Notes:
The data come from the RNA Mapping Database (RMDB), library RNAMAK. Structure probing data (2A3) for a 207-nucleotide construct. As a SHAPE reagent, 2A3 marks flexible, mostly unpaired nucleotides at the ribose 2'-OH. For 2A3 the reverse transcriptase was SuperScript II with manganese. Values cover nucleotides 27 to 156. The reactions ran in a buffer of 150 mM KOAc, 10 mM MgCl2 and 150 mM bicine (pH 8.5), at 24 C.
[RMDB]
RNA sequence: GGGAACGACUCGAGUAGAGUCGAAAAUCCUAAGUCAGAUUCCCUGAGCCAAUGACGACACAGGGAGGCUUCGGAAACGAAGCCGAAGAACUGUGUUAAGACAGGCUCAGAUCAUCUGAUAUGGAAAAAGCCGUAGAAACUUCGGUUUCUACGGCAAGUAACACGGUACGUUCGCGUACCGUGUUACAAAAGAAACAACAACAACAAC
Reactivity to 2A3 in 0.01 (KOAc 150mM, MgCl2 10mM, bicine 150mM(pH8.5), 24C), signal-to-noise 1, nucleotides 027 to 156: u020c010c010u010a020a030g020u010c000a000g000a020u070u130c070c000c010u000g000a000g000c000c000a300a220u130g040a110c060g000a000c000a000c000a000g050g030g000a010g000g000c010u030u000c000g020g000a050a040a010c000g000a010a000g000c010c000g000a050a010g000a020a000c000u000g010u000g040u030u030a100a020g090a060c030a030g000g000c010u000c000a010g000a000u030c020a010u000c030u020g010a000u010a120u210g010g050a010a060a020a100a030g000c000c000g020u010a000g000a000a000a000c010u030u050c300g110g000u000u000u000c000u000a000c000g000g000c000a000a000